[RMDB]
RNA sequence: GGGAACGACUCGAGUAGAGUCGAAAAUCAGUGGAAUUGCCUGCUAAGCAAGUUAAUUCAGAGCUCAUGGCCCGCGGCAUCGACGAUGUCGUGAUCUCGGUGGUGGCUUCACCGCAGUCCACGGUGAGUAAUGAGGGGACUUCGGUCCCCUCAUUACAAAAGAAACAACAACAACAAC
Reactivity to 2A3 in 0.01 (KOAc 150mM, MgCl2 10mM, bicine 150mM(pH8.5), 24C), signal-to-noise 1, nucleotides 027 to 126: u090c010a020g090u100g060g070a060a140u110u050g000c030c000u030g000c030u120a040a060g070c030a080a030g030u170u170a080a040u140u040c000a000g030a030g100c010u030c140a060u070g010g020c010c000c000g110c000g000g020c030a000u030c030g270a280c190g030a050u020g000u010c010g040u010g050a090u000c060u010c020g050g000u030g000g040u060g010g000c020u090u150c000a000c060c040g040c030a060g080u150c000c010a000c000g000g060u060g000a050
Reactivity to DMS in 0.01 (KOAc 150mM, MgCl2 10mM, bicine 150mM(pH8.5), 24C), signal-to-noise 2, nucleotides 027 to 126: u000c110a130g090u010g020g010a070a030u000u000g020c030c040u010g020c030u000a180a220g000c050a040a090g020u000u010a060a020u000u010c060a100g020a140g030c050u010c080a050u000g000g010c020c060c040g000c040g020g020c010a000u000c040g010a180c200g010a040u000g010u000c020g020u000g000a040u000c050u000c050g000g040u000g000g020u000g000g010c050u010u010c060a020c030c100g020c090a070g010u000c050c070a110c000g010g050u000g000a160

Structure probing data (2A3 and DMS) for a 177-nucleotide construct. DMS adducts were read by reverse transcription with MarathonRT. The DMS profile rests on 1,342 reads.